[RMDB]
RNA sequence: GGGAACGACUCGAGUAGAGUCGAAAAUCCACUAUGAAUCUAGUCACUAAAUAAACACAAUUAGCUACUGUGUGUAAUAGUGAGUGUUGAUAACACGAAAUAAUAGUAUAGUUUUGGAAGAUUAUACGCGCCCUUGCUCCGUUCGCGGAGCAAGGAACAAAUGGUAGUGGUUCGCCACUACCAUUUGAAAAGAAACAACAACAACAAC
Reactivity to 2A3 in 0.01 (KOAc 150mM, MgCl2 10mM, bicine 150mM(pH8.5), 24C), signal-to-noise 4, nucleotides 027 to 156: u020c020c000a030c070u210a210u250g150a100a050u040c100u080a100g130u050c020a000c000u020a030a020a020u050a020a100a000c010a000c010a040a110u150u100a110g060c040u150a070c040u040g010u000g000u010g010u030a010a040u010a020g010u000g030a030g020u010g020u050u040g120a200u120a170a040c030a000c050g060a090a030a070u230a080a070u090a120g000u030a010u020a030g020u010u040u060u150g140g060a130a060g010a060u020u050a040u020a030c040g040c010g070c050c000c000u000u000g000c010u000c000c000g040u040u070c210g000c020g090g000a000g010c000a000a010g000g000a000a010
Reactivity to DMS in 0.01 (KOAc 150mM, MgCl2 10mM, bicine 150mM(pH8.5), 24C), signal-to-noise 3, nucleotides 027 to 156: u000c010c000a150c130u010a110u010g010a160a120u000c080u010a140g030u000c000a040c020u000a020a010a050u000a180a180a020c000a020c010a010a050u000u000a230g030c160u010a090c040u000g020u000g000u000g000u010a130a260u000a000g010u000g000a060g010u000g000u000u000g010a100u000a110a070c040a120c060g000a120a090a170u000a110a300u020a090g000u000a020u000a040g010u000u000u000u000g030g020a150a190g010a040u010u000a020u000a010c000g000c110g000c080c000c000u000u000g020c000u000c000c000g040u000u010c280g020c020g010g000a040g020c010a000a000g000g000a040a040

Structure probing data (2A3 and DMS) for a 207-nucleotide construct. The reactions ran in a buffer of 150 mM KOAc, 10 mM MgCl2 and 150 mM bicine (pH 8.5), at 24 C. High 2A3 reactivity points to a flexible backbone, as in loops and unpaired stretches. For DMS, 5,462 sequencing reads were counted. It was measured as part of the RMDB library M2RFPK.